[RMDB]
RNA sequence: GGGAACGACUCGAGUAGAGUCGAAAAAUGAAGUGGAGAAGUGGAAGAAGUAACUGCAGAGUGGCAGCGCUAACGUUGGAUGAGCCGCUCCAACGACGGCUGAACCGCCCCAACGACCGCUACACCGCGAUUUAGCCCAUUUCGAUGGGCUAAAUCGAAAAGAAACAACAACAACAAC
Reactivity to DMS in 0.01 (KOAc 150mM, MgCl2 10mM, bicine 150mM(pH8.5), 24C), signal-to-noise 2, nucleotides 027 to 126: a040u010g000a060a060g000u010g000g010a020g000a070a020g020u010g000g000a040a100g000a050a050g000u030a060a110c080u000g030c050a030g000a130g000u010g030g000c100a070g000c170g010c050u000a100a230c030g010u000u020g000g000a110u020g000a070g000c070c020g080c150u000c020c080a070a070c090g000a020c090g000g000c000u000g020a120a110c050c090g040c140c040c050c040a010a020c100g000a050c200c030g000c000u040a070c070a060c000c030g010
Reactivity to 2A3 in 0.01 (KOAc 150mM, MgCl2 10mM, bicine 150mM(pH8.5), 24C), signal-to-noise 2, nucleotides 027 to 126: a000u170g020a100a010g010u050g020g010a030g020a080a030g030u080g060g030a050a040g020a050a060g100u120a040a010c040u060g000c040a010g010a000g170u040g100g000c060a000g000c020g000c080u120a100a100c010g010u010u020g040g070a080u130g090a030g080c020c010g040c010u020c020c010a070a010c030g030a010c020g000g000c010u020g010a040a020c030c000g000c070c000c000c000a000a020c020g020a020c060c000g000c010u010a020c030a010c000c020g000
An RNA of 177 nucleotides, treated with DMS and 2A3 and read out base by base. Conditions: 150 mM KOAc, 10 mM MgCl2 and 150 mM bicine (pH 8.5), 24 C. 2A3 adducts were read by reverse transcription with SuperScript II with manganese. The DMS profile rests on 2,523 reads.